[RMDB]
RNA sequence: GGGAACGACUCGAGUAGAGUCGAAAAGGAUAAAAAUUUAAGCAUUAUUCGCAAAAAUGGACGCAAGUCAGUCUUUUUAAUGCUAAAUAUUAAAAAAGGUAUAUUUAAGACGCAUCCAAACUUGAGAAUGAAACGUUGUAUUCGUACAACGUUUCAUAAAAGAAACAACAACAACAAC
Reactivity to DMS in 0.01 (KOAc 150mM, MgCl2 10mM, bicine 150mM(pH8.5), 24C), signal-to-noise 2, nucleotides 027 to 126: g020g030a020u040a010a040a090a050a050u000u020u010a040a110g010c030a040u000u000a020u010u000c110g000c060a020a060a080a100a040u040g040g000a040c000g030c110a090a060g010u010c050a170g000u010c010u000u000u020u030u000a000a070u000g000c010u000a000a070a080u010a250u000u010a000a040a040a010a070a090g010g000u010a080u000a090u030u020u000a070a070g000a030c040g000c140a020u010c010c020a070a000a100c090u000u000g010a070g010a160
Reactivity to 2A3 in 0.01 (KOAc 150mM, MgCl2 10mM, bicine 150mM(pH8.5), 24C), signal-to-noise 3, nucleotides 027 to 126: g090g000a070u240a090a060a050a080a100u160u180u140a100a030g030c030a000u010u020a040u050u170c060g020c110a010a050a060a050a020u100g060g010a000c010g000c050a190a010g050u060c030a010g000u000c010u000u070u000u050u070a020a010u020g020c010u050a110a110a080u220a100u110u200a050a110a030a090a000a020g020g000u110a050u050a050u120u120u090a080a030g030a000c070g000c020a000u020c010c000a040a030a150c030u030u030g000a010g130a180
Chemical mapping of a 177-nucleotide RNA with DMS and 2A3. Source: RMDB library OK1LIB, as collected in RNAgym.